[RMDB]
RNA sequence: GGGAACGACUCGAGUAGAGUCGAAAAAAACCGAAGCCCUCACGGGCAAUGUGGUGUCAGGGCUACCUCUCAUCAGCCGACCGUCUUCACGAAGUCUCUUGGAAUAGAGCGUGAUACAGGGUGACAACCCCGUACUGAAGACCAGUACGCUGUGCGGGAUAUAGUGCAUGUUCGCAUGCACUAUAUCAAAAGAAACAACAACAACAAC
Reactivity to DMS in 0.01 (KOAc 150mM, MgCl2 10mM, bicine 150mM(pH8.5), 24C), signal-to-noise 3, nucleotides 027 to 156: a050a050a100c040c020g010a150a160g000c010c000c000u000c170a110c180g020g040g030c010a010a000u000g020u000g030g040u000g030u000c090a090g000g010g010c040u000a120c030c020u000c030u000c040a140u000c040a040g020c010c050g010a050c000c150g000u000c030u010u000c010a130c070g020a100a090g000u000c010u000c000u010u020g010g040a300a170u000a010g010a010g010c020g000u000g020a230u000a060c010a050g030g000g030u000g010a160c200a070a140c010c000c000c000g010u020a050c050u000g020a050a080g020a100c040c000a020g010u000a080c020g000c020u000g020u010g010c120g000g000
Reactivity to 2A3 in 0.01 (KOAc 150mM, MgCl2 10mM, bicine 150mM(pH8.5), 24C), signal-to-noise 4, nucleotides 027 to 156: a000a000a000c070c000g020a080a000g000c020c020c010u040c040a060c050g170g070g000c170a050a130u190g030u090g010g010u040g070u110c080a040g010g030g000c030u040a060c010c010u020c010u010c040a130u030c000a040g000c000c000g010a000c010c010g010u010c010u000u000c000a010c000g010a040a020g060u040c000u000c000u010u010g010g030a010a010u020a010g010a000g000c000g000u000g000a000u010a050c030a030g010g000g000u000g010a010c010a010a040c000c000c000c010g000u000a010c000u000g000a010a010g000a010c010c000a000g000u000a000c000g010c000u000g010u030g020c060g020g030